[RMDB]
RNA sequence: GGGAACGACUCGAGUAGAGUCGAAAACAGCGGCUAGGGGAGAUCCAGCACAUGAGCCAAGCCUGCCUCCUGUCCCUGCUGCCCGUGCCCCGGGACGUCCUGGAGACAGAGGAUGAGGAGCCUCCACCGUUAUCGGACAUUUCGAUGUCCGAUAACGAAAAGAAACAACAACAACAAC
Reactivity to 2A3 in 0.01 (KOAc 150mM, MgCl2 10mM, bicine 150mM(pH8.5), 24C), signal-to-noise 5, nucleotides 027 to 126: c030a010g070c040g040g000c020u100a080g010g010g030g020a060g020a070u060c040c010a000g030c020a020c020a120u120g040a010g050c010c010a020a010g030c010c010u020g020c010c000u050c000c030u000g020u030c010c000c000u020g020c020u050g000c010c000c000g030u150g060c030c000c000c000g000g020g000a020c010g050u080c010c030u090g070g010a130g010a050c020a020g030a000g040g010a040u100g070a030g030g010a020g020c000c000u010c000c020a060c030
Reactivity to DMS in 0.01 (KOAc 150mM, MgCl2 10mM, bicine 150mM(pH8.5), 24C), signal-to-noise 3, nucleotides 027 to 126: c070a120g010c070g000g010c050u010a090g020g010g010g010a100g000a050u020c030c000a070g000c100a060c110a060u020g020a160g000c040c040a080a140g000c030c010u000g000c030c010u000c050c070u010g010u010c000c000c000u000g000c030u010g000c000c040c030g020u010g040c050c030c040c040g020g000g000a110c120g000u030c070c040u040g000g020a150g000a050c060a080g000a110g010g000a040u010g010a080g020g010a070g000c040c030u010c010c040a120c120